RNA sequence: GGGAACGACUCGAGUAGAGUCGAAAAUUGAGACAGAGUCUCACUGUCGCCCAGGCUGGAGUGCAGUGGCACGAUCUCGGCUCACUGCAAGCUCCGCCUCCGGGGUUCACGCCAUUCUCCUGCCUCACACAGAAGUUAGUUUCGACUAACUUCUGUGAAAAGAAACAACAACAACAAC
Reactivity to DMS in 0.01 (KOAc 150mM, MgCl2 10mM, bicine 150mM(pH8.5), 24C), signal-to-noise 4, nucleotides 027 to 126: u000u000g000a110g000a030c020a110g000a180g010u000c030u000c050a190c110u000g000u010c060g000c020c010c020a060g000g020c030u010g030g000a040g030u000g010c050a030g010u000g010g010c040a090c070g000a100u000c140u000c040g000g000c020u000c020a020c020u000g000c020a040a090g010c000u000c000c010g000c020c030u000c060c040g000g010g010g010u000u000c070a070c080g000c030c050a050u000u000c020u000c010c010u000g000c020c010u000c070a160
Reactivity to 2A3 in 0.01 (KOAc 150mM, MgCl2 10mM, bicine 150mM(pH8.5), 24C), signal-to-noise 4, nucleotides 027 to 126: u070u090g030a040g000a000c040a080g110a030g130u030c010u000c030a050c020u050g020u050c030g050c000c000c010a020g030g000c080u280g030g040a030g020u050g010c020a020g000u020g030g000c060a090c300g150a300u080c190u070c140g060g000c090u090c080a010c010u010g000c020a070a050g070c000u000c010c010g000c000c000u030c040c040g030g000g000g010u060u090c040a030c070g000c000c020a050u100u020c020u020c010c010u000g050c000c010u080c010a030

Conditions: 150 mM KOAc, 10 mM MgCl2 and 150 mM bicine (pH 8.5), 24 C. This 177-nucleotide RNA was probed chemically with DMS and 2A3. For 2A3 the reverse transcriptase was SuperScript II with manganese. DMS adducts were read by reverse transcription with MarathonRT. The DMS profile rests on 5,647 reads. Reactivities are rounded to 0.1 and cut off at 0 and 3.